[RMDB]
RNA sequence: GGGAACGACUCGAGUAGAGUCGAAAAGAUAUGGAACUCGGCAGCUGGAGCUGAAAAAAUUGCCAUGGGUCGGAAACGACCCACUAGGCAUAUUAGCAGCGUUGAAAGCUGCCGAGUUCCUAAGUCACCUAUUAAUAAGGUUCGCCUUAUUAAUAGGAAAAGAAACAACAACAACAAC
Reactivity to DMS in 0.01 (KOAc 150mM, MgCl2 10mM, bicine 150mM(pH8.5), 24C), signal-to-noise 3, nucleotides 027 to 126: g000a030u010a300u010g000g010a000a010c010u000c010g000g020c000a010g010c000u010g000g000a120g000c000u010g000a000a000a050a080a140a140u010u000g010c000c010a260u000g010g000g000u010c010g000g000a120a100a240c010g020a010c000c000c000a000c170u010a100g020g020c000a010u000a040u000u000a120g000c000a000g010c020g000u020u030g010a170a130a060g000c000u000g010c000c000g000a000g000u000u000c010c020u000a020a060g010u000c030a270

Conditions: 150 mM KOAc, 10 mM MgCl2 and 150 mM bicine (pH 8.5), 24 C. This 177-nucleotide RNA was probed chemically with DMS. DMS adducts were read by reverse transcription with MarathonRT. Values cover nucleotides 27 to 126.